[RMDB]
This 177-nucleotide RNA was probed chemically with 2A3 and DMS.
Reactivities are given for positions 27 through 126.
DMS adducts were read by reverse transcription with MarathonRT.
RNA sequence: GGGAACGACUCGAGUAGAGUCGAAAAUAGGCUAGAAGAGCCGUGAACCUGAAUGGGAAUGCGCUUCAGGGGCGCGUGGAAACGCCCAGGAGGCAGCGGCGACGGCGCAGCCUGGGACUGCCAGGAGCAUCGUUAGUCAUUUCGAUGACUAACGAUGAAAAGAAACAACAACAACAAC
Reactivity to 2A3 in 0.01 (KOAc 150mM, MgCl2 10mM, bicine 150mM(pH8.5), 24C), signal-to-noise 6, nucleotides 027 to 126: u140a030g000g010c040u030a040g030a180a030g030a180g030c010c010g000u020g010a020a080c010c010u050g130a180a090u200g000g010g030a050a090u130g030c070g010c040u050u060c060a060g020g010g030g000c010g000c030g030u060g020g160a100a060a010c030g010c000c000c000a010g030g000a000g020g000c050a040g010c030g030g000c040g020a040c020g020g000c020g010c050a020g010c000c000u030g030g000g020a210c080u120g030c000c010a020g030g000a010g050
Reactivity to DMS in 0.01 (KOAc 150mM, MgCl2 10mM, bicine 150mM(pH8.5), 24C), signal-to-noise 7, nucleotides 027 to 126: u030a070g000g020c010u000a100g040a150a100g000a180g010c010c010g010u000g010a090a200c030c000u010g020a160a090u050g010g000g000a140a100u020g010c070g010c010u000u000c020a080g010g010g000g000c000g010c020g010u010g020g010a100a120a160c100g000c000c000c000a050g000g010a030g000g020c020a170g010c010g000g000c100g000a100c040g000g000c020g000c090a070g020c000c010u020g010g010g000a160c090u020g020c000c020a050g000g010a120g000